[RMDB]
This 177-nucleotide RNA was probed chemically with 2A3 and DMS. It was measured as part of the RMDB library RFMREP. For DMS, 1,760 sequencing reads were counted.
RNA sequence: GGGAACGACUCGAGUAGAGUCGAAAAAGGUCAGUUCGUAUGCUGCGGGAAAUGGCCGCCGAGGAGGUAGGGCUUACGCUUGCGUUUGUCUGUUAUAUCUUGGUGGACGAGUAGUCGCGGUUGGGACGAGCAUAGGUAACUUCGGUUACCUAUGCUCAAAAGAAACAACAACAACAAC
Reactivity to 2A3 in 0.01 (KOAc 150mM, MgCl2 10mM, bicine 150mM(pH8.5), 24C), signal-to-noise 2, nucleotides 027 to 126: a000g120g020u110c030a020g030u070u030c020g030u060a050u140g040c000u020g000c020g030g000g080a040a120a060u120g030g010c020c000g000c020c000g000a010g070g050a050g070g000u060a030g040g000g000c010u020u010a000c000g030c060u060u080g080c010g050u000u010u000g000u000c000u020g180u240u060a110u000a020u110c020u010u050g000g020u020g030g000a000c000g030a020g030u050a050g030u040c040g000c020g010g030u040u080g010g020g000a020c050
Reactivity to DMS in 0.01 (KOAc 150mM, MgCl2 10mM, bicine 150mM(pH8.5), 24C), signal-to-noise 1, nucleotides 027 to 126: a120g020g000u000c050a090g010u010u000c060g000u020a060u020g010c000u000g010c020g000g000g000a050a100a170u000g010g010c010c000g010c000c000g000a040g010g020a050g000g020u000a130g000g010g000c010u000u010a020c020g010c040u010u000g020c030g020u010u000u000g010u010c020u000g010u000u000a080u000a080u010c020u000u000g010g050u010g030g000a060c010g000a070g010u010a110g010u010c020g030c010g000g010u000u000g020g010g030a050c050